[RMDB]
RNA sequence: GGGAACGACUCGAGUAGAGUCGAAAACGAGUGCGUACCUGGUACGCGCCGAGGCCGUAGUACGACGAUCUAUGGCCAGCGCCACUCUGGCCGUGUAGGCCAUGAUCAGCGUACAGGCGCUGGCCUAGACUCUAGAGGGGUUCGCCCCUCUAGAGUCAAAAGAAACAACAACAACAAC
Reactivity to 2A3 in 0.01 (KOAc 150mM, MgCl2 10mM, bicine 150mM(pH8.5), 24C), signal-to-noise 3, nucleotides 027 to 126: c030g020a060g060u040g020c000g010u010a020c020c300u130g150g060u020a010c010g000c000g010c010c010g000a090g070g070c020c020g060u030a020g030u020a030c070g020a020c030g030a110u030c040u100a040u120g000g000c000c000a000g000c010g000c010c000a060c000u070c030u030g000g010c010c020g030u130g250u300a070g010g000c000c000a010u050g030a040u100c040a010g120c020g130u100a040c040a040g000g000c010g000c020u010g000g000c000c000u000a000
Reactivity to DMS in 0.01 (KOAc 150mM, MgCl2 10mM, bicine 150mM(pH8.5), 24C), signal-to-noise 4, nucleotides 027 to 126: c060g000a110g030u000g020c010g020u000a010c010c190u000g050g020u000a000c010g010c010g000c010c030g010a160g000g010c030c010g010u000a080g020u000a100c060g000a060c090g000a090u000c070u000a070u000g000g020c000c000a000g000c010g020c000c010a160c110u010c030u000g000g010c020c010g000u010g000u030a140g000g010c010c010a000u010g010a040u010c130a130g020c120g000u000a080c150a130g000g000c000g020c010u000g010g000c000c010u000a030
Chemical mapping of a 177-nucleotide RNA with 2A3 and DMS.
For DMS, 4,776 sequencing reads were counted.
The reactions ran in a buffer of 150 mM KOAc, 10 mM MgCl2 and 150 mM bicine (pH 8.5), at 24 C.